Chemical mapping of a 177-nucleotide RNA with 2A3 and DMS. The reactions ran in a buffer of 150 mM KOAc, 10 mM MgCl2 and 150 mM bicine (pH 8.5), at 24 C. For 2A3 the reverse transcriptase was SuperScript II with manganese.
RNA sequence: GGGAACGACUCGAGUAGAGUCGAAAAGAUCGAUCUUGAACUCAUGAAUGAAGAAUAGAAUAGACAAGUACUUGAAGCUCCUCACACUAUAAUUCGCCGAUGUCUUCGUCAACUAGGCGAGAUAUUAGGGAAAGAUUUACUUCGGUAAAUCUUUCCCAAAAGAAACAACAACAACAAC
Reactivity to 2A3 in 0.01 (KOAc 150mM, MgCl2 10mM, bicine 150mM(pH8.5), 24C), signal-to-noise 3, nucleotides 027 to 126: g110a060u060c010g010a020u000c010u020u050g050a130a070c000u020c040a040u070g140a100a050u100g000a060a090g030a060a120u270a100g090a100a070u030a070g030a040c000a100a020g070u000a160c020u020u090g060a060a010g020c010u000c020c010u140c000a030c000a000c020u060a030u080a300a100u070u040c000g000c020c000g000a020u160g000u000c040u140u140c050g040u030c010a000a050c100u080a060g000g030c070g040a000g000a000u060a050u000u170a020
Reactivity to DMS in 0.01 (KOAc 150mM, MgCl2 10mM, bicine 150mM(pH8.5), 24C), signal-to-noise 1, nucleotides 027 to 126: g000a090u000c000g050a070u000c000u030u020g000a180a260c090u000c010a070u090g040a080a170u050g000a040a050g000a030a090u090a160g000a070a000u130a010g000a000c070a120a050g000u000a110c010u000u000g000a110a200g000c000u000c000c000u030c230a030c190a130c290u000a000u010a070a060u010u000c000g120c000c010g000a130u150g000u000c010u000u000c160g000u010c100a130a010c090u010a050g000g000c000g000a000g000a000u030a040u050u030a090